[RMDB]
RNA sequence: GGGAACGACUCGAGUAGAGUCGAAAAGCCAAUGAAUUGCCGAGAAGCCUGGCUCGAAAUCGUCGACGCAUCGACGACGGUCCUGCCAUGAGACCGUAACGAGGACAUGUCGCCUCGAAUGGCGUCGUAUAACAUGAGUGGUUCGCCACUCAUGUAAGAAUGGUAUGGGCUUCGGCCCAUACCAUUCAAAAGAAACAACAACAACAAC
Reactivity to 2A3 in 0.01 (KOAc 150mM, MgCl2 10mM, bicine 150mM(pH8.5), 24C), signal-to-noise 1, nucleotides 027 to 156: g000c000c160a020a000u070g100a030a070u140u090g030c050c030g060a040g040a160a000g020c030c090u150g000g000c050u040c080g100a050a060a000u020c020g030u000c000g020a010c030g100c260a150u040c000g000a010c020g000a000c000g010g000u000c000c010u050g020c000c000a030u000g000a010g000a000c000c000g030u040a000a000c030g000a020g000g040a080c040a110u290g050u080c180g010c000c010u000c000g010a000a010u020g000g020c000g010u050c040g040u010a120u110a120a010c000a000u000g000a000g000u000g000g010u030u070c050g020c050c000a000c000u000c000a000u000g000u000a000a000
This 207-nucleotide RNA was probed chemically with 2A3. Conditions: 150 mM KOAc, 10 mM MgCl2 and 150 mM bicine (pH 8.5), 24 C. It was measured as part of the RMDB library M2RFPK.